[RMDB]
RNA sequence: GGGAACGACUCGAGUAGAGUCGAAAAGAGCACGUUGCAGUUUCUAGCUUCUUCGGCGGGGACCGUUUCUUUCUUUCCGCCGUCGGUCCUUUCUUGCUAGUUUCUUUCUGCUUUUUCGUGCUCGAGAGGGACGGGUCGCGUUCGCGCGAUUCGUCCCAAAAGAAACAACAACAACAAC
Reactivity to 2A3 in 0.01 (KOAc 150mM, MgCl2 10mM, bicine 150mM(pH8.5), 24C), signal-to-noise 8, nucleotides 027 to 126: g010a010g000c000a000c020g040u070u080g010c000a010g010u020u050u030c010u010a010g000c010u060u030c000u050u020c040g000g000c010g000g000g000g000a030c040c070g090u040u140u070c070u040u160u020c010u040u090u030c010c010g010c040c010g010u010c010g040g070u080c040c030u100u200u160c080u080u080g000c000u010a020g020u020u070u060c060u030u150u030c020u030g040c020u090u120u070u120u130c000g000u010g000c000u000c000g000a010g030a020
Reactivity to DMS in 0.01 (KOAc 150mM, MgCl2 10mM, bicine 150mM(pH8.5), 24C), signal-to-noise 1, nucleotides 027 to 126: g010a000g030c000a000c000g010u010u010g000c010a040g000u030u010u000c010u010a000g000c010u000u030c040u000u000c010g020g010c000g000g010g000g010a110c120c100g050u020u000u010c030u000u010u000c040u000u040u000c040c030g010c010c020g040u000c070g000g010u030c070c040u000u020u030c070u000u020g000c020u000a010g000u010u000u070c120u020u010u000c060u030g020c000u000u010u010u010u010c030g010u000g000c010u000c010g000a070g030a170

Description: The record gives the reactivity of an RNA of 177 nucleotides to 2A3 and DMS. DMS adducts were read by reverse transcription with MarathonRT. It was measured as part of the RMDB library OK1LIB. Values are in units of 0.01, from 0 to 300, in steps of 10. The 2A3 profile rests on 7,964 reads. For 2A3 the reverse transcriptase was SuperScript II with manganese.